An RNA of 177 nucleotides, treated with 2A3 and DMS and read out base by base.
For 2A3 the reverse transcriptase was SuperScript II with manganese.
For 2A3, 1,913 sequencing reads were counted.
[RMDB]
RNA sequence: GGGAACGACUCGAGUAGAGUCGAAAAUGAGAUCAUCGAGGUGCGCUCCGCAGACGGCUCGCCGCCAUACGUGGUGCGUUGGCUGGUAAACGGGCACGAGACAACGGUGUACCCCGGGUCGGACGCGUCGCCACUUAGUUUUCGAACUAAGUGGCGAAAAAGAAACAACAACAACAAC
Reactivity to 2A3 in 0.01 (KOAc 150mM, MgCl2 10mM, bicine 150mM(pH8.5), 24C), signal-to-noise 1, nucleotides 027 to 126: u190g020a050g030a130u070c030a000u080c100g020a040g000g060u050g010c060g030c050u050c040c020g020c020a010g050a130c000g000g010c000u000c010g040c000c010g010c000c010a090u130a140c170g080u050g040g030u110g110c040g000u000u020g000g020c050u110g030g020u130a090a040a090c010g020g000g000c030a040c110g040a050g060a040c030a110a030c020g010g000u030g020u230a190c000c000c020c000g000g000g000u010c000g020g010a030c020g000c020g060
Reactivity to DMS in 0.01 (KOAc 150mM, MgCl2 10mM, bicine 150mM(pH8.5), 24C), signal-to-noise 3, nucleotides 027 to 126: u010g000a160g020a070u000c060a070u000c040g010a080g020g030u000g010c080g010c040u000c030c080g030c030a140g020a300c090g000g010c000u010c090g010c030c010g030c000c060a050u020a060c120g050u000g000g010u000g010c090g030u000u000g000g000c020u000g030g000u000a070a080a170c120g000g000g000c020a050c010g000a100g010a120c070a070a040c040g000g010u000g010u000a130c040c000c000c010g000g020g000u010c000g000g000a260c070g000c040g010